[RMDB]
RNA sequence: GGGAACGACUCGAGUAGAGUCGAAAAGCAUAGAUAUGGACUCCCUAAGACUGAUGACCGUAUGGAGGUGUAUGUCGGAAACGACAUACGCGAAGUACGCAAGGUUAUGGGAGUCCUAAGUCAGGAAGUUAACCCGUUAGUUCGCUAACGGGUUAACAAAAGAAACAACAACAACAAC
Reactivity to DMS in 0.01 (KOAc 150mM, MgCl2 10mM, bicine 150mM(pH8.5), 24C), signal-to-noise 2, nucleotides 027 to 126: g010c130a080u030a010g010a000u010a180u010g000g020a020c000u010c000c000c000u000a140a220g020a040c000u010g000a040u000g000a240c300c000g010u000a000u000g000g000a180g000g010u000g000u020a000u000g020u020c000g010g010a030a040a020c000g020a020c000a000u000a010c010g010c010g000a300a260g020u010a010c010g000c000a100a060g010g010u010u000a200u010g010g000g030a020g020u000c000c000u000a000a060g020u000c000a130g010g010a060a080